RNA sequence: GGGAACGACUCGAGUAGAGUCGAAAAUGUAAUUGGUGAGCAAAGCCAUUUCACUGAGUUGACACCUGUUGCAUUGCAGUCUUCUAUGCACAAAAACAGUUUUGUUCCUUAAUUUCAGGAGGUUUACAAAUCCUAUCAAAUUCGUUUGAUAGGAUUUAAAAGAAACAACAACAACAAC
Reactivity to DMS in 0.01 (KOAc 150mM, MgCl2 10mM, bicine 150mM(pH8.5), 24C), signal-to-noise 9, nucleotides 027 to 126: u000g010u000a030a030u010u000g000g010u000g010a170g000c060a030a090a120g010c060c070a100u010u010u010c180a100c170u000g010a130g010u000u010g000a070c030a030c040c010u000g010u000u000g010c020a020u000u000g000c150a170g010u000c060u000u000c060u010a040u000g010c070a090c200a040a040a050a040a060c120a080g000u000u010u010u010g010u000u010c010c010u000u010a070a120u000u000u010c090a080g010g000a060g010g010u000u000u010a080c160
Reactivity to 2A3 in 0.01 (KOAc 150mM, MgCl2 10mM, bicine 150mM(pH8.5), 24C), signal-to-noise 4, nucleotides 027 to 126: u030g000u010a010a030u040u030g010g000u050g040a180g070c040a070a060a040g050c060c060a080u160u280u150c120a090c100u070g050a030g140u040u050g030a020c010a010c020c000u000g000u000u020g000c000a010u000u020g000c060a050g010u020c020u090u000c010u100a050u070g050c070a040c040a120a070a020a060a010c020a030g010u010u050u130u110g020u000u100c010c000u090u120a170a150u100u130u080c020a010g010g090a060g110g060u070u130u030a040c050

Background:
Conditions: 150 mM KOAc, 10 mM MgCl2 and 150 mM bicine (pH 8.5), 24 C. This 177-nucleotide RNA was probed chemically with DMS and 2A3. Reactivities are given for positions 27 through 126. The DMS profile rests on 16,642 reads.